[RMDB]
RNA sequence: GGGAACGACUCGAGUAGAGUCGAAAAACGGGCCGGCAUAGCGCAAGAAGACGUGACACGCCAUAUUCAGAACGAGCUUGAGGAAUUGGACAGUGAAUGGGAAACCAAGCCGCCACCUUAGCCAAAAUCAUCGCUCGAUGUUCGCGUCGAGUGAUGAAAAAGAAACAACAACAACAAC
Reactivity to 2A3 in 0.01 (KOAc 150mM, MgCl2 10mM, bicine 150mM(pH8.5), 24C), signal-to-noise 9, nucleotides 027 to 126: a000c040g010g020g000c040c010g030g020c040a080u100a080g050c050g010c040a030a030g080a050a010g030a070c020g030u030g030a010c010a010c050g030c010c010a050u080a090u180u110c050a030g060a120a040c050g020a040g040c020u080u100g040a040g030g050a090a100u120u080g010g020a030c040a070g030u030g120a100a100u080g020g000g020a030a030a030c010c000a020a010g020c010c000g010c010c000a030c000c010u010u050a020g010c010c010a030a050a010a130
Reactivity to DMS in 0.01 (KOAc 150mM, MgCl2 10mM, bicine 150mM(pH8.5), 24C), signal-to-noise 9, nucleotides 027 to 126: a100c140g000g000g010c050c050g020g020c080a070u020a100g010c040g000c050a070a070g010a160a050g000a050c030g000u010g000a060c040a090c110g000c040c030a070u020a040u020u010c060a070g010a090a060c110g000a090g020c060u000u020g010a090g010g010a110a070u020u010g000g020a070c050a060g000u020g020a070a060u020g000g000g000a100a070a140c040c020a040a090g010c030c030g010c030c020a060c010c010u010u010a050g000c030c050a040a040a050a110